[RMDB]
RNA sequence: GGGAACGACUCGAGUAGAGUCGAAAAAUAAACAUGGUUACCAAAACCAUUCCGUGAAGGUAGCCAUGAAACACGGUAUGGUUAUAAAAGCUGAGCGUUAGGAAAAACCUAAUGCUCAGCAAAAAAAGACUAAGACUUACUUCGGUAAGUCUUAGUCAAAAGAAACAACAACAACAAC
Reactivity to DMS in 0.01 (KOAc 150mM, MgCl2 10mM, bicine 150mM(pH8.5), 24C), signal-to-noise 1, nucleotides 027 to 126: a090u010a040a040a220c040a020u000g000g050u000u000a050c020c010a120a120a080a120c060c050a040u000u050c000c040g030u000g010a200a140g000g000u000a010g010c070c020a010u000g000a150a070a030c040a010c010g010g020u010a040u000g040g000u000u000a140u000a050a090a050a070g000c020u000g000a020g020c000g010u010u010a000g000g000a070a090a020a190a150c000c000u000a000a000u000g000c000u000c000a000g000c010a010a000a020a100a010a070a030